[RMDB]
RNA sequence: GGGAACGACUCGAGUAGAGUCGAAAACACACAAUAAGUUUACGGGUAUGAUUUCCAUAUUCAACCAUGUGAAUAGUACCUAGUAGCCCAUCAAUAUCUUCCUCAUAAGGAUAAGAAUCGGAAUCAAUAGUAGCUGCGACAGGAGUUGGUGGCGUAGCGACACUGAUGUCUUCGGACAUCAGUGUCGAAAAGAAACAACAACAACAAC
Reactivity to DMS in 0.01 (KOAc 150mM, MgCl2 10mM, bicine 150mM(pH8.5), 24C), signal-to-noise 1, nucleotides 027 to 156: c070a150c100a240c060a160a150u000a030a090g020u000u000u000a080c040g010g060g020u020a070u000g010a290u010u000u000c060c040a000u000a090u000u000c100a090a130c220c150a100u000g020u050g000a050a030u020a280g000u000a000c020c010u010a060g070u000a000g000c070c010c030a060u000c100a050a130u010a060u010c050u000u000c000c040u000c090a160u000a050a110g030g010a100u010a020a070g010a060a040u000c090g000g010a060a120u000c030a130a080u000a060g000u000a070g010c030u010g000c000g030a130c010a040g010g000a190g000u000u020g000g000u020g020g010c010g030u000a090g000
Reactivity to 2A3 in 0.01 (KOAc 150mM, MgCl2 10mM, bicine 150mM(pH8.5), 24C), signal-to-noise 2, nucleotides 027 to 156: c060a000c020a020c020a070a240u190a220a020g020u020u060u030a010c020g000g030g000u010a010u000g020a060u010u030u000c020c010a000u010a090u110u180c080a080a110c080c080a010u020g110u040g010a000a000u010a000g000u000a000c020c010u090a070g010u050a050g040c000c000c000a020u080c000a020a000u080a070u150c060u050u020c020c000u060c040a080u110a300a110g050g010a020u060a130a050g030a090a030u120c060g010g140a060a020u070c080a070a110u070a200g020u080a020g010c020u020g030c030g060a020c030a050g020g000a080g090u070u050g050g040u010g000g000c040g020u010a010g000
Chemical mapping of a 207-nucleotide RNA with DMS and 2A3. The reactions ran in a buffer of 150 mM KOAc, 10 mM MgCl2 and 150 mM bicine (pH 8.5), at 24 C. The 2A3 profile rests on 1,005 reads.